[RMDB]
RNA sequence: GGGAACGACUCGAGUAGAGUCGAAAAUCAAGAGGAUAUUUAUGCAAGCGAGCAUGACAAAGAAAAACGCGAUCGCUUAGAGGCCGAAGAAGAAGCGCGAGCUGCAGAGCAAAGACAAGAAGAAGCAGCUUUCUAUUAUGUUCGCAUAAUAGAAAGCAAAAGAAACAACAACAACAAC
Reactivity to 2A3 in 0.01 (KOAc 150mM, MgCl2 10mM, bicine 150mM(pH8.5), 24C), signal-to-noise 2, nucleotides 027 to 126: u090c030a020a040g020a050g110g020a050u050a120u170u230u110a060u280g000c030a020a060g040c020g050a020g020c020a030u140g030a060c060a070a100a090g140a100a070a010a010a000c020g000c040g050a060u060c010g000c040u020u040a080g020a030g080g030c070c060g000a010a010g020a020a010g050a040a000g030c060g000c040g020a020g000c010u040g020c030a000g030a000g070c030a060a000a040g030a060c040a060a020g080a010a020g020a070a000g040c040a020
Reactivity to DMS in 0.01 (KOAc 150mM, MgCl2 10mM, bicine 150mM(pH8.5), 24C), signal-to-noise 4, nucleotides 027 to 126: u000c060a090a080g030a090g020g010a070u010a050u000u000u020a070u020g020c060a060a090g020c040g000a070g030c020a040u000g020a100c170a100a120a080g000a070a040a040a110a100c070g000c050g010a060u000c060g020c020u000u010a070g010a100g000g010c030c030g000a070a060g000a070a090g020a060a060g020c050g020c140g000a100g010c050u010g000c100a060g000a070g030c080a040a090a080g010a040c040a030a060g010a070a060g010a050a080g000c140a090
Source: RMDB library OK2TRN, as collected in RNAgym. An RNA of 177 nucleotides, treated with 2A3 and DMS and read out base by base. The RNA was probed in 150 mM KOAc, 10 mM MgCl2 and 150 mM bicine (pH 8.5) at 24 C. Reactivities are given for positions 27 through 126. For DMS the reverse transcriptase was MarathonRT. 2A3 adducts were read by reverse transcription with SuperScript II with manganese.